RNA sequence: GGGAACGACUCGAGUAGAGUCGAAAACAACGCCCGGAUUGACGUAAGCGCCGCCGACGUGCUGGAAGCGCACCGGGACCGAAUCAAGAAGGCGGCCGACCUCGGCGUGUCCGUCGCCCGUGAGGAGGUGCCCGUAGAUACUGGCACGCUCAAGACCAACGUAGAAUGUAUUCGUACAUUCUACGUUAAAAGAAACAACAACAACAAC
Reactivity to 2A3 in 0.01 (KOAc 150mM, MgCl2 10mM, bicine 150mM(pH8.5), 24C), signal-to-noise 3, nucleotides 027 to 156: c070a050a050c070g020c000c000c000g040g040a190u130u130g080a080c070g040u100a140a110g040c010g000c030c060g000c020c020g050a030c020g010u020g000c030u030g040g090a080a040g060c020g000c050a020c020c000g030g000g000a010c010c010g020a000a030u070c020a080a000g090a080a040g090g010c000g020g000c010c000g000a020c000c030u120c090g160g000c080g070u130g010u000c000c000g000u010c000g000c000c010c020g030u060g010a020g020g020a010g050g000u050g220c000c000c000g050u020a030g000a020u150a100c030u040g010g000c010a000c000g070c040u040c020a040a100g060a080c070c040
Reactivity to DMS in 0.01 (KOAc 150mM, MgCl2 10mM, bicine 150mM(pH8.5), 24C), signal-to-noise 2, nucleotides 027 to 156: c080a120a130c030g000c000c010c050g000g000a130u000u000g010a110c080g030u010a110a090g030c070g000c000c010g010c050c000g030a070c050g010u020g000c020u000g020g020a140a180g050c050g000c010a090c250c020g000g000g000a080c010c010g010a300a300u010c030a060a250g020a140a080g070g000c000g060g000c010c080g010a040c000c050u000c110g020g000c090g000u020g010u010c000c070g010u000c020g030c020c000c120g000u010g000a060g000g010a300g040g010u000g040c010c010c020g000u000a060g010a200u010a050c020u000g020g000c020a040c020g000c050u010c020a170a110g010a090c070c070